[RMDB]
RNA sequence: GGGAACGACUCGAGUAGAGUCGAAAAUGAGAGGCUCCGCGGCAUCGGCAUCCUCUGCGCAUGCUCUGUCAGGGGUUGGGAGAUGUCCAGGAGGAGGGGCCGCCAUGCCCGAGAUGGACAGCGCUUCUACUCUGCUCCAGUUCGCUGGAGCAGAGUAAAAAGAAACAACAACAACAAC
Reactivity to DMS in 0.01 (KOAc 150mM, MgCl2 10mM, bicine 150mM(pH8.5), 24C), signal-to-noise 1, nucleotides 027 to 126: u010g000a090g000a140g020g010c000u000c020c010g030c210g010g000c030a010u010c050g010g000c000a060u000c010c010u000c010u010g030c300g000c080a020u020g020c130u060c070u000g030u000c010a030g020g000g000g010u000u020g000g030g020a210g000a010u000g000u000c030c000a150g020g020a060g020g020a160g000g000g000g000c020c030g010c030c030a030u000g000c010c000c000g020a150g010a050u000g000g040a030c030a050g000c140g020c090u000u010c060

Record summary
Chemical mapping of a 177-nucleotide RNA with DMS. The DMS profile rests on 977 reads.